[RMDB]
RNA sequence: GGGAACGACUCGAGUAGAGUCGAAAAGCCGAUUGCAGUUCGCCAUCUUCGACUUCAUCACGCCCGAGGAGUGGGACGACGGCGUGAGUACCGUUGCCUAUGGCAACCGCGUUGCUCGCAUGACGCCGCAGCUGUCUGCUAUUCCGCAGGCAUUGAAGUCUUCAAGCAAAUUCGUUUGCUUGAAGACAAAAGAAACAACAACAACAAC
Reactivity to 2A3 in 0.01 (KOAc 150mM, MgCl2 10mM, bicine 150mM(pH8.5), 24C), signal-to-noise 1, nucleotides 027 to 156: g040c030c010g080a090u060u120g000c050a060g100u080u100c020g030c010c010a060u030c040u030u050c010g050a050c020u080u040c100a110u040c020a030c100g040c020c030c030g020a040g020g030a060g070u160g000g010g080a060c040g020a020c000g010g010c010g000u030g000a010g000u020a030c010c000g000u010u010g000c000c030u300a260u300g010g000c010a010a010c050c040g040c060g090u070u130g020c020u030c010g030c080a100u180g020a030c050g020c030c020g030c010a030g030c030u040g000u010c000u010g030c010u070a190u240u090c050c060g020c040a020g020g000c020a020u010u130g050a120a020
Reactivity to DMS in 0.01 (KOAc 150mM, MgCl2 10mM, bicine 150mM(pH8.5), 24C), signal-to-noise 1, nucleotides 027 to 156: g060c020c010g010a100u010u010g100c060a080g020u000u010c060g000c030c020a120u000c030u000u030c020g000a020c000u000u010c070a140u000c080a090c130g000c000c000c010g030a220g000g010a130g030u000g020g030g000a060c000g020a140c060g020g030c010g000u010g000a070g040u000a030c050c040g030u020u000g000c010c040u000a060u000g060g010c020a000a010c060c060g000c100g000u000u010g020c000u000c020g010c060a180u000g000a100c000g000c040c030g050c070a140g050c070u000g000u000c020u020g000c020u000a170u000u000c100c020g000c000a040g020g000c030a060u010u000g000a100a230